An RNA of 207 nucleotides, treated with 2A3 and DMS and read out base by base.
For DMS the reverse transcriptase was MarathonRT.
For 2A3, 3,851 sequencing reads were counted.
[RMDB]
RNA sequence: GGGAACGACUCGAGUAGAGUCGAAAAGCGUACUACGCUCCUUGGAUUUAAGAGCGAGGUAUGGUCUAUUCCCAAAUAGGAAUAGGCCAUACUACCCACCGCUCUUUGUCAGGAGCGUAUCGCAAAACGCUUGUCGUUGUUCGCAACGACAAGCGAAGGUUACGAUCUGAUUCGUCAGAUCGUAACCAAAAGAAACAACAACAACAAC
Reactivity to 2A3 in 0.01 (KOAc 150mM, MgCl2 10mM, bicine 150mM(pH8.5), 24C), signal-to-noise 3, nucleotides 027 to 156: g000c000g040u060a090c060u000a000c040g040c020u030c000c010u080u160g250g010a110u300u300u160a020a000g000a000g000c000g000a020g020g000u000a000u010g000g000u010c000u000a000u000u070c000c020c050a110a290a170u230a110g000g000a010a000u010a030g000g000c010c000a000u000a000c010u000a000c020c040c000a080c020c000g000c000u000c000u000u000u020g010u000c010a000g010g000a000g000c000g000u000a000u050c010g000c000a010a100a000a000c010g000c000u010u000g000u010c000g000u000u020g030u060u120c210g000c130a000a000c000g000a000c000a000a000g000c000g000a020a040
Reactivity to DMS in 0.01 (KOAc 150mM, MgCl2 10mM, bicine 150mM(pH8.5), 24C), signal-to-noise 1, nucleotides 027 to 156: g030c000g020u000a060c110u000a050c030g010c000u030c020c020u000u000g030g040a120u000u000u000a030a040g020a040g000c030g000a200g080g020u000a040u010g030g040u000c000u020a030u000u000c000c010c020a070a160a160u000a050g010g000a020a000u000a010g000g020c000c000a000u000a010c000u020a020c030c020c040a300c140c010g040c020u010c000u000u020u000g000u020c040a200g030g010a030g030c000g000u000a010u030c010g040c020a060a040a070a180c020g000c040u010u020g010u010c000g040u000u000g010u000u000c190g020c000a040a110c000g020a030c030a000a050g000c000g010a000a020